[RMDB]
RNA sequence: GGGAACGACUCGAGUAGAGUCGAAAACUGCAGGUGAAUGGGGCUGUAGCAAUCUUAUUUAGGAUGAAAGUCUGAUUGGCCCUUAUUAGGAUGAUUAACCUUUCUGAAAUUAAGAGCCACCCCUGAAGGCGUCAAUGUUAUUCGUAACAUUGACGCCAAAAGAAACAACAACAACAAC
Reactivity to DMS in 0.01 (KOAc 150mM, MgCl2 10mM, bicine 150mM(pH8.5), 24C), signal-to-noise 1, nucleotides 027 to 126: c000u000g030c100a090g020g000u040g010a150a120u020g000g000g000g010c210u000g000u000a030g030c180a090a060u000c050u010u010a020u010u100u050a200g000g000a080u000g010a010a010a060g030u000c060u030g000a080u010u030g020g040c120c000c000u000u040a030u020u030a020g060g000a080u010g010a020u010u010a060a060c200c030u000u000u000c000u010g020a120a060a010u010u010a000a000g000a070g000c070c040a130c000c040c010c000u020g000a030a140
Reactivity to 2A3 in 0.01 (KOAc 150mM, MgCl2 10mM, bicine 150mM(pH8.5), 24C), signal-to-noise 2, nucleotides 027 to 126: c050u040g000c020a030g150g000u120g110a120a100u130g070g010g000g030c010u030g000u010a000g060c020a030a060u000c010u080u080a130u050u100u150a140g000g020a020u070g060a040a010a000g080u000c030u040g060a200u060u110g090g030c020c020c000u040u000a100u080u200a000g030g000a040u040g000a030u040u100a000a090c000c000u040u050u000c060u000g020a110a030a030u050u020a000a000g000a000g000c010c010a030c080c000c010c000u010g040a040a000
Chemical mapping of a 177-nucleotide RNA with DMS and 2A3. For 2A3, 1,214 sequencing reads were counted. It was measured as part of the RMDB library RFM100. The RNA was probed in 150 mM KOAc, 10 mM MgCl2 and 150 mM bicine (pH 8.5) at 24 C.